[RMDB]
RNA sequence: GGGAACGACUCGAGUAGAGUCGAAAAUGAUCUCAUGUCGAUCGUCUAUAGUACAUCGCUGCACAUGAGUACCAUGCAGUCGUACCAUGGAGCGUACGAUCGUGCGAUCCAUGGCUCUAGGCAGUACGGAAAGUUGUACAUUCGUGUACAACUUUCCAAAAGAAACAACAACAACAAC
Reactivity to 2A3 in 0.01 (KOAc 150mM, MgCl2 10mM, bicine 150mM(pH8.5), 24C), signal-to-noise 4, nucleotides 027 to 126: u130g040a060u030c010u000c010a020u040g080u040c030g000a020u010c100g040u000c110u140a300u120a190g040u100a010c010a050u030c020g040c160u260g030c100a030c000a050u020g010a010g020u020a070c010c000a030u100g010c020a020g060u080c050g050u070a010c010c010a010u020g000g000a020g040c020g000u000a000c010g100a240u260c220g000u000g000c000g000a010u000c000c000a010u010g000g020c020u000c000u010a040g010g000c020a040g050u090a070c080
Reactivity to DMS in 0.01 (KOAc 150mM, MgCl2 10mM, bicine 150mM(pH8.5), 24C), signal-to-noise 5, nucleotides 027 to 126: u010g010a080u010c010u000c020a030u000g000u000c020g000a030u000c200g010u000c020u010a140u010a140g020u010a020c030a030u000c020g030c300u010g010c150a030c030a020u000g000a050g020u000a070c040c030a130u000g010c050a060g010u000c090g000u000a080c010c010a020u000g010g000a030g000c010g020u000a020c010g000a110u010c170g000u010g010c010g010a030u000c020c010a000u000g000g020c040u000c050u010a140g010g030c020a090g020u010a070c200
Source: RMDB library OK2TRN, as collected in RNAgym. Chemical mapping of a 177-nucleotide RNA with 2A3 and DMS. For 2A3, 6,267 sequencing reads were counted.